RNA sequence: GGGAACGACUCGAGUAGAGUCGAAAACCUAUCCAAAAUGAGAUCCCAUCUUGCACACUGUGCUAAUUUGAGAUUCUCAUGCCUCCUACUUGGAGAGAUCUGGACUAGAAGUCAGGGCAUCUGACACAAUACAUUCGUCAGUUCGCUGACGAAUGAACGCAUAGGGUCGGUUCGCCGACCCUAUGCGAAAAGAAACAACAACAACAAC
Reactivity to 2A3 in 0.01 (KOAc 150mM, MgCl2 10mM, bicine 150mM(pH8.5), 24C), signal-to-noise 1, nucleotides 027 to 156: c020c010u020a110u070c020c010a140a020a050a080u050g000a000g000a020u000c010c000c040a030u010c000u010u030g010c030a000c020a020c110u300g000u000g000c030u210a020a050u010u000u000g020a010g000a050u300u080c000u020c000a000u060g000c000c000u020c000c000u110a290c200u120u210g000g000a000g020a020g040a060u020c100u120g060g020a030c050u030a040g060a270a000g110u000c000a050g000g030g100c130a150u040c050u000g000a000c000a000c060a070a000u140a020c000a000u000u000c000g000u000c000a000g020u010u180c250g000c040u000g000a000c010g000a000a000u010g000a000a010